[RMDB]
RNA sequence: GGGAACGACUCGAGUAGAGUCGAAAACUAGGAUCGUUCGCGAUCCUAGAAAGGCGCGGCACCGUCCGCGGAACUAACGGCAAAACAAGAAAGUCAGCAUAAAAAUCAUCAGCUUCGGCUGAUGAAAUCUUUCUAUUCCGUUCGCGGAAUAGAAAGAAAAAGAAACAACAACAACAAC
Reactivity to 2A3 in 0.01 (KOAc 150mM, MgCl2 10mM, bicine 150mM(pH8.5), 24C), signal-to-noise 1, nucleotides 027 to 126: c000u000a030g000g010a000u000c010g000u060u030c170g000c030g140a000u000c030c000u000a000g010a020a030a000g080g080c000g000c020g000g000c090a070c200c120g050u080c000c000g000c000g000g030a020a020c020u040a010a020c040g000g000c050a030a070a050a010c030a140a000g120a190a080a000g110u100c040a010g120c110a110u200a170a150a040a000a070u010c000a000u010c000a010g010c020u050u060c180g110g000c000u030g000a000u000g020a000a000a000
Reactivity to DMS in 0.01 (KOAc 150mM, MgCl2 10mM, bicine 150mM(pH8.5), 24C), signal-to-noise 1, nucleotides 027 to 126: c010u000a010g000g000a000u000c010g020u020u060c130g070c020g020a010u000c000c000u000a000g050a040a050a100g030g030c030g000c000g020g000c040a300c130c100g010u010c020c030g030c040g000g000a050a120c130u010a090a030c070g000g000c120a060a120a070a120c220a030a050g000a030a030a120g000u000c030a020g030c150a140u010a000a000a090a100a120u000c000a000u000c000a000g000c010u000u000c250g020g000c000u000g000a000u000g000a000a040a050

This 177-nucleotide RNA was probed chemically with 2A3 and DMS.
Values cover nucleotides 27 to 126.
For DMS the reverse transcriptase was MarathonRT.
2A3 adducts were read by reverse transcription with SuperScript II with manganese.
The reactions ran in a buffer of 150 mM KOAc, 10 mM MgCl2 and 150 mM bicine (pH 8.5), at 24 C.